[RMDB]
RNA sequence: GGGAACGACUCGAGUAGAGUCGAAAAUUCCAUUUGAGUAUCUUGAAAACGGGCUUUUCAGCAUGGAACGUACAUAUUAAAUAGUAGGAGUGCAUAGUGGCCCGUAUAGCAGGCAUUAACAUUCCUGAAAACGUGAAAAGGUUCGCCUUUUCACGAAGUAAUAACGAGAGUUCGCUCUCGUUAUUACAAAAGAAACAACAACAACAAC
Reactivity to DMS in 0.01 (KOAc 150mM, MgCl2 10mM, bicine 150mM(pH8.5), 24C), signal-to-noise 3, nucleotides 027 to 156: u000u000c010c000a200u000u020u010g010a110g030u000a080u000c060u000u030g000a100a080a130a070c050g000g040g020c050u000u000u000u000c060a210g000c060a060u000g010g000a080a080c050g040u000a170c050a160u000a170u000u020a100a060a160u000a120g000u010a070g020g000a180g020u000g020c020a130u000a140g020u010g030g000c010c010c000g020u010a030u000a150g010c010a020g010g020c090a060u000u000a110a060c030a140u000u000c000c010u010g000a050a070a080a150c040g040u000g000a010a010a030a000g000g020u000u010c300g020c000c010u000u000u000u000c000a030c020g010a000a080
Reactivity to 2A3 in 0.01 (KOAc 150mM, MgCl2 10mM, bicine 150mM(pH8.5), 24C), signal-to-noise 1, nucleotides 027 to 156: u060u010c010c000a020u160u060u080g040a060g040u100a120u060c050u000u090g080a050a050a000a010c010g010g000g040c010u100u100u210u170c020a010g020c000a010u050g060g000a190a010c030g090u060a010c030a000u200a080u210u280a120a140a190u140a040g050u000a010g010g110a050g020u000g000c010a030u060a160g090u060g030g000c020c000c000g010u000a000u000a000g000c010a000g000g040c010a010u030u080a040a020c010a040u030u100c000c000u010g020a080a080a080a050c010g000u000g000a000a010a000a000g040g000u040u050c110g120c030c000u010u000u020u000c000a000c000g000a010a000

An RNA of 207 nucleotides, treated with DMS and 2A3 and read out base by base. Conditions: 150 mM KOAc, 10 mM MgCl2 and 150 mM bicine (pH 8.5), 24 C. Source: RMDB library M2RFPK, as collected in RNAgym. DMS (dimethyl sulfate) methylates the pairing face of unpaired adenines and cytosines.